An RNA of 177 nucleotides, treated with 2A3 and DMS and read out base by base. The 2A3 profile rests on 1,966 reads. The reactions ran in a buffer of 150 mM KOAc, 10 mM MgCl2 and 150 mM bicine (pH 8.5), at 24 C. It was measured as part of the RMDB library OK1LIB.
RNA sequence: GGGAACGACUCGAGUAGAGUCGAAAAGCGAACAUGAACACGCUGAUUUCGUUGGGCACGCUGACCGCGUUCAUCUACUCCACCUAUCAGCUGUUCGCCGGUGGCCCGCUGUUCUUUGACACCGCGGUCCAGCACUACGGUUCGCCGUAGUGCUGGAAAAAGAAACAACAACAACAAC
Reactivity to 2A3 in 0.01 (KOAc 150mM, MgCl2 10mM, bicine 150mM(pH8.5), 24C), signal-to-noise 3, nucleotides 027 to 126: g040c010g020a010a010c030a160u210g070a030a020c030a010c190g000c020u020g010a010u060u120u080c070g030u050u040g000g010g020c070a030c070g030c020u040g080a060c040c070g030c030g040u030u070c040a140u000c050u120a100c050u020c030c000a010c010c000u030a010u020c010a000g040c000u030g030u030u010c000g000c000c000g060g040u060g000g000c000c010c010g000c000u040g030u070u020c000u100u070u140g070a080c060a010c060c010g000c040g010g030
Reactivity to DMS in 0.01 (KOAc 150mM, MgCl2 10mM, bicine 150mM(pH8.5), 24C), signal-to-noise 2, nucleotides 027 to 126: g000c050g000a040a080c080a090u060g000a110a040c110a080c190g030c000u020g040a000u020u000u000c210g010u000u030g020g000g000c170a100c140g000c080u000g010a080c140c060g020c110g000u000u000c060a050u050c080u020a160c170u020c000c040a040c000c060u000a000u000c030a000g010c060u000g020u010u010c060g010c060c060g050g030u000g000g000c080c010c000g060c100u000g000u020u000c010u050u030u010g000a140c050a030c060c020g000c060g010g000